[RMDB]
RNA sequence: GGGAACGACUCGAGUAGAGUCGAAAAUGAGUGACGCUGUUGCUACUUACUUUGGGGAUUGUAUAACCUUACCCUUUGAUUGUCAAUGGGAUUUGAUUGUUAGUGAUAUGUAUGACCCUAUAACUAAGAACAUAGGUGAGUACAAUGUAAGUAAAGAACAAGCCUUAUGCUUCGGCAUAAGGCUUGUAAAAGAAACAACAACAACAAC
Reactivity to 2A3 in 0.01 (KOAc 150mM, MgCl2 10mM, bicine 150mM(pH8.5), 24C), signal-to-noise 2, nucleotides 027 to 156: u190g020a050g050u050g010a010c090g000c080u040g010u080u020g000c000u010a040c010u130u020a010c010u050u150u190g000g020g000g010a020u060u050g050u070a120u090a130a080c020c020u030u130a130c000c010c000u020u030u020g100a120u100u110g140u230c040a020a020u060g000g020g040a030u080u080u070g060a170u090u000g040u050u060a110g020u020g120a070u050a090u220g060u000a040u060g060a060c010c000c000u000a000u000a060a040c080u050a130a040g080a100a020c040a050u030a000g030g000u000g010a030g000u010a000c000a010a020u060g020u030a040a110g000u010a030a180a050g070a010